[RMDB]
RNA sequence: GGGAACGACUCGAGUAGAGUCGAAAAGGAAGACAACUCCGGGUCUUCCAAGGACGCACGAGUGCAGCGUCAAUACUCGAAGGAAGGCGAAAGACACCACGUCUUCCAACCGGAGAAGGUGUCAGAAGGGUUGCAGGUACUUCGGUACUUGCAACCCAAAAGAAACAACAACAACAAC
Reactivity to 2A3 in 0.01 (KOAc 150mM, MgCl2 10mM, bicine 150mM(pH8.5), 24C), signal-to-noise 5, nucleotides 027 to 126: g000g000a000a000g000a000c010a070a050c020u010c000c000g010g000g000u000c000u010u000c000c000a010a000g090g000a010c000g040c010a030c130g170a110g150u250g030c150a040g000c040g010u020c000a000a010u060a040c020u010c030g050a040a010g020g000a000a000g000g010c000g030a140a020a010g020a020c010a000c010c000a030c000g010u000c000u000u000c000c010a010a000c010c000g000g010a000g000a000a010g000g000u010g010u020c010a010g090a150a090
Reactivity to DMS in 0.01 (KOAc 150mM, MgCl2 10mM, bicine 150mM(pH8.5), 24C), signal-to-noise 2, nucleotides 027 to 126: g000g010a000a000g000a010c010a000a060c130u010c020c010g020g010g020u010c020u020u000c000c000a090a140g030g000a030c000g010c000a170c120g000a070g070u080g000c160a270g060c000g000u000c100a070a070u010a080c000u010c000g010a040a090g010g000a030a000g000g000c050g070a080a070a020g000a040c100a040c050c030a250c060g060u000c040u000u000c010c050a000a000c020c040g020g040a060g000a210a050g040g010u000g010u020c000a020g020a130a210